[RMDB]
RNA sequence: GGGAACGACUCGAGUAGAGUCGAAAACAUAUGACGGAGAGUGGAACACUCAGCGGAAACGGAUCCAAUGUCUGAAGUCUUUAAUGGGUAUAACAGUCAGUUGACCCAGAUCCCAACAGACAAUAAACAAGAACGUCGUAUUCGUACGACGUUCUUGAAAAGAAACAACAACAACAAC
Reactivity to DMS in 0.01 (KOAc 150mM, MgCl2 10mM, bicine 150mM(pH8.5), 24C), signal-to-noise 2, nucleotides 027 to 126: c050a080u000a020u000g000a100c040g020g020a120g020a050g000u000g000g020a160a120c060a060c030u020c040a090g000c090g010g000a050a050a070c120g010g020a050u000c030c050a050a090u000g000u010c000u000g000a110a150g000u000c020u000u000u000a180a140u000g000g000g000u000a060u010a040a010c030a190g010u010c180a090g000u000u000g010a020c010c000c010a000g020a090u000c000c000c000a060a140c090a040g000a030c050a040a080u010a070a080a170
Reactivity to 2A3 in 0.01 (KOAc 150mM, MgCl2 10mM, bicine 150mM(pH8.5), 24C), signal-to-noise 2, nucleotides 027 to 126: c030a030u180a050u220g090a020c050g050g000a030g020a020g120u050g050g110a150a000c030a010c040u030c040a030g090c030g060g020a070a080a040c060g050g060a010u030c000c030a070a070u040g000u000c020u020g090a070a010g000u010c010u000u060u040a080a050u030g040g020g020u040a100u030a300a010c010a010g300u230c030a040g010u100u010g010a010c000c000c000a000g010a020u000c030c010c000a020a000c010a000g010a010c010a020a130u190a070a060a030

The record gives the reactivity of an RNA of 177 nucleotides to DMS and 2A3.
DMS adducts were read by reverse transcription with MarathonRT.
For DMS, 1,376 sequencing reads were counted.
The RNA was probed in 150 mM KOAc, 10 mM MgCl2 and 150 mM bicine (pH 8.5) at 24 C.
For 2A3, 1,877 sequencing reads were counted.
It was measured as part of the RMDB library M2PK90.